Chemical mapping of a 177-nucleotide RNA with DMS and 2A3.
RNA sequence: GGGAACGACUCGAGUAGAGUCGAAAAGGUGCCCUAUUCGGAGCACUGCAGUUCCCGAUAGAAAGGCUAAGCACUUCGCAAUGAAGUAAGGUGGGACUUUUCCUUCGGGAACCAAGCGGUUGGUUCCACUACUAUCCUAGUUCGCUAGGAUAGUAGUAAAAGAAACAACAACAACAAC
Reactivity to DMS in 0.01 (KOAc 150mM, MgCl2 10mM, bicine 150mM(pH8.5), 24C), signal-to-noise 8, nucleotides 027 to 126: g010g010u000g000c010c000c020u010a130u010u000c130g010g000a040g010c020a030c010u000g000c040a190g010u000u000c000c000c000g010a030u000a060g010a020a020a010g010g010c030u010a130a190g010c060a050c010u000u000c010g000c180a150a130u010g010a030a020g010u000a100a070g010g010u000g010g010g020a100c010u000u000u000u000c010c030u000u000c010g000g000g000a010a010c000c060a070a140g000c050g010g010u000u000g020g010u000u000c000c010
Reactivity to 2A3 in 0.01 (KOAc 150mM, MgCl2 10mM, bicine 150mM(pH8.5), 24C), signal-to-noise 6, nucleotides 027 to 126: g120g030u140g050c020c010c020u070a200u050u230c100g030g010a050g010c010a000c010u020g000c000a000g000u000u000c000c010c000g000a000u010a020g030a010a020a000g050g000c130u150a030a050g060c020a030c050u000u010c030g050c200a240a300u300g010a030a030g020u110a040a090g130g010u080g010g030g120a280c020u030u020u020u010c000c010u010u020c010g000g000g000a000a000c000c000a060a030g030c030g040g030u050u100g100g030u020u010c000c000